[RMDB]
RNA sequence: GGGAACGACUCGAGUAGAGUCGAAAACUCAUGGUAGAGCGGUUUGUGUCUUUGGCUAUAGAUGCUUACCCUCUCACAAAGCAUGAAGAUAUAGAAUACCAGAAUGUAUUCUGGGUCUACUUACAGUAGUUAUUAACACGUUCGCGUGUUAAUAACUAAAAGAAACAACAACAACAAC
Reactivity to DMS in 0.01 (KOAc 150mM, MgCl2 10mM, bicine 150mM(pH8.5), 24C), signal-to-noise 3, nucleotides 027 to 126: c040u000c010a060u000g000g010u010a010g010a010g030c290g040g000u010u010u010g020u000g000u000c000u000u030u010g000g010c210u000a100u010a020g010a010u000g000c000u010u010a030c010c000c000u000c000u000c070a050c150a080a090a130g010c060a050u010g000a070a050g000a110u010a180u000a020g010a020a020u000a120c000c070a080g010a050a070u010g010u000a070u010u000c000u000g030g020g000u000c020u000a040c080u000u000a080c200a130g010u000
Reactivity to 2A3 in 0.01 (KOAc 150mM, MgCl2 10mM, bicine 150mM(pH8.5), 24C), signal-to-noise 4, nucleotides 027 to 126: c010u030c000a010u060g070g040u110a010g000a000g060c150g010g020u000u010u010g020u010g000u010c010u050u080u100g100g000c040u050a030u060a160g010a000u020g000c000u000u000a010c010c000c000u000c000u000c000a050c010a030a140a020g090c030a020u050g040a050a030g050a010u060a010u020a160g050a080a030u060a300c000c000a020g040a100a030u120g060u180a170u070u030c000u010g000g000g000u000c000u040a090c040u110u060a040c030a090g060u060

This 177-nucleotide RNA was probed chemically with DMS and 2A3. The RNA was probed in 150 mM KOAc, 10 mM MgCl2 and 150 mM bicine (pH 8.5) at 24 C. For 2A3, 3,136 sequencing reads were counted. 2A3 adducts were read by reverse transcription with SuperScript II with manganese. Reactivities are rounded to 0.1 and cut off at 0 and 3. It was measured as part of the RMDB library 15KREP.